[RMDB]
RNA sequence: GGGAACGACUCGAGUAGAGUCGAAAAAUGAAUUGAUUCGUCAAUUCAUGACCGCAACCGAGCCGAAAGGCAUUUUAUGCGUACGCUGGCGAAAGCCUAAAAAUCAUCGUGUCUUCGGACACGAUAAUCGCCAAGUGAAUUUCGAUUCACUUGGCGAAAAAGAAACAACAACAACAAC
Reactivity to DMS in 0.01 (KOAc 150mM, MgCl2 10mM, bicine 150mM(pH8.5), 24C), signal-to-noise 1, nucleotides 027 to 126: a000u000g000a000a010u000u000g010a010u000u010c300g010u010c000a000a010u000u000c000a000u000g000a170c030c000g010c080a130a130c110c040g010a070g000c000c000g000a050a060a110g010g040c010a030u020u020u020u060a010u000g000c000g020u010a070c270g000c130u000g000g030c010g000a180a020a100g010c000c020u010a010a040a090a130a060u000c090a010u000c010g030u000g000u000c000u000u010c250g070g000a010c010a000c000g010a000u000a040a070